[RMDB]
RNA sequence: GGGAACGACUCGAGUAGAGUCGAAAAGGGAGAGCUGCUUUUUUGUCUUUGUCCUGGCUCUCCGUCCUGAAACGAGGUGAGGGGAGUGAUAGCUCAAGCGUAGAUGAUUGAGGUCUUCAUCUCGCUCCACACGAAACAUGUUCGCAUGUUUCGUGUGAAAAGAAACAACAACAACAAC
Reactivity to DMS in 0.01 (KOAc 150mM, MgCl2 10mM, bicine 150mM(pH8.5), 24C), signal-to-noise 2, nucleotides 027 to 126: g000g010g000a010g000a020g010c000u000g020c080u000u010u000u000u000u000g020u010c080u000u000u010g000u000c060c090u000g000g000c010u000c010u000c000c000g010u010c010c010u000g010a070a060a080c070g010a060g000g030u000g000a060g010g000g000g010a110g020u000g010a130u000a090g000c000u000c030a040a030g010c040g020u000a130g010a110u000g010a100u000u010g010a060g020g000u000c020u010u000c010a010u000c000u000c000g000c030u000c100
Reactivity to 2A3 in 0.01 (KOAc 150mM, MgCl2 10mM, bicine 150mM(pH8.5), 24C), signal-to-noise 3, nucleotides 027 to 126: g090g000g000a000g000a000g000c030u030g070c080u140u110u100u040u130u210g160u080c080u010u100u120g100u010c030c070u030g010g020c010u000c000u000c010c010g040u000c000c000u040g040a090a060a010c050g020a020g000g010u030g010a030g040g030g010g010a080g070u160g100a130u160a050g060c030u000c040a030a000g000c020g110u180a100g070a250u200g000a010u060u050g000a030g010g070u000c000u010u010c010a010u020c000u020c020g000c030u040c050